Chemical mapping of a 177-nucleotide RNA with 2A3. The data come from the RNA Mapping Database (RMDB), library OK2TST. For 2A3, 523 sequencing reads were counted. 2A3 is a SHAPE reagent: it acylates the 2'-hydroxyl of flexible nucleotides of all four kinds. The reactions ran in a buffer of 150 mM KOAc, 10 mM MgCl2 and 150 mM bicine (pH 8.5), at 24 C.

[RMDB]
RNA sequence: GGGAACGACUCGAGUAGAGUCGAAAAAAGCACAUCGCCAGUCUCGGAGAGGAGAUAUCGUCCUACUGUGAGUGUUGCGGCGGUGGUGGCUGUGGCGAGGGAGAGGAGGAGGAGGCGUGGUCCGUUACCCACCGAAGGACUUCGGUCCUUCGGUGGGAAAAGAAACAACAACAACAAC
Reactivity to 2A3 in 0.01 (KOAc 150mM, MgCl2 10mM, bicine 150mM(pH8.5), 24C), signal-to-noise 1, nucleotides 027 to 126: a000a000g060c040a010c030a060u050c050g100c000c000a010g080u020c030u080c040g090g030a010g000a000g100g030a030g020a080u140a060u160c120g140u000c060c000u130a300c000u230g110u130g290a050g000u160g080u110u290g100c160g020g010c110g000g000u090g020g180u020g010g050c050u080g000u000g120g020c130g030a140g000g000g070a120g030a030g130g020a070g000g060a010g030g030a060g000g020c020g090u010g020g050u020c010c030g000u030u000a090